[RMDB]
RNA sequence: GGGAACGACUCGAGUAGAGUCGAAAAGACAUGACAAUGGCUGCUGCCAAACUGUUUUCUCUUCUGAGGACAGAUGUCCCGUGCAAGUGGCUUGGUGGAAGGGACUAGUGUCUCUAAUAUAGGGUGAGAUAUUUAUUUAUUUCGAUAAAUAAAUAUCAAAAGAAACAACAACAACAAC
Reactivity to 2A3 in 0.01 (KOAc 150mM, MgCl2 10mM, bicine 150mM(pH8.5), 24C), signal-to-noise 2, nucleotides 027 to 126: g050a010c040a050u130g010a020c070a010a180u130g040g000c010u100g000c050u080g010c060c000a030a060a020c010u010g030u020u030u120u020c020u000c000u300u120c140u140g010a040g010g000a000c000a010g070a060u070g050u030c000c010c010g040u070g050c030a080a090g020u040g070g060c060u070u040g080g000u060g080g090a050a080g060g020g000a010c010u030a090g110u020g010u060c020u000c010u100a140a130u190a060u180a120g020g000g010u030g010a080
Reactivity to DMS in 0.01 (KOAc 150mM, MgCl2 10mM, bicine 150mM(pH8.5), 24C), signal-to-noise 6, nucleotides 027 to 126: g000a070c050a030u010g000a120c130a100a080u010g000g010c010u010g000c110u010g010c030c050a050a090a120c030u000g000u000u000u010u010c020u010c210u010u010c200u010g010a040g000g000a020c020a030g010a080u000g000u000c000c020c010g020u000g000c060a030a070g030u000g010g010c040u010u000g020g030u000g010g010a170a080g010g000g010a040c040u010a110g010u010g010u000c000u000c030u000a080a090u010a100u010a090g000g000g010u000g000a170
The record gives the reactivity of an RNA of 177 nucleotides to 2A3 and DMS.
The 2A3 profile rests on 2,615 reads.
The reactions ran in a buffer of 150 mM KOAc, 10 mM MgCl2 and 150 mM bicine (pH 8.5), at 24 C.
It was measured as part of the RMDB library OK2TRN.
For DMS the reverse transcriptase was MarathonRT.